[RMDB]
RNA sequence: GGGAACGACUCGAGUAGAGUCGAAAAGCAGCGCCGGGGAAAACCCACACAGCAUGGCCAGGUGCUCGCCGGCAAAUUCCUGGGUUCCGCCGACGAGGGGCGCGGUGGGCCGACCCUCGAACCCGGGGGAAGCGACAACAUUCGUGUUGUCGCUUCCAAAAGAAACAACAACAACAAC
Reactivity to 2A3 in 0.01 (KOAc 150mM, MgCl2 10mM, bicine 150mM(pH8.5), 24C), signal-to-noise 1, nucleotides 027 to 126: g040c010a020g000c050g010c060c000g030g000g000g030a000a210a090a130c030c010c020a000c020a000c010a000g020c050a100u140g090g000c000c010a030g040g040u040g010c000u030c090g090c000c000g000g030c030a080a070a000u180u120c010c000u020g010g020g000u070u000c000c050g030c000c010g020a080c030g010a030g020g020g010g000c060g000c010g020g010u170g010g060g000c000c000g060a050c000c000c000u030c000g030a020a030c030c020c000g040g020g020
The record gives the reactivity of an RNA of 177 nucleotides to 2A3. It was measured as part of the RMDB library OK1LIB. For 2A3 the reverse transcriptase was SuperScript II with manganese.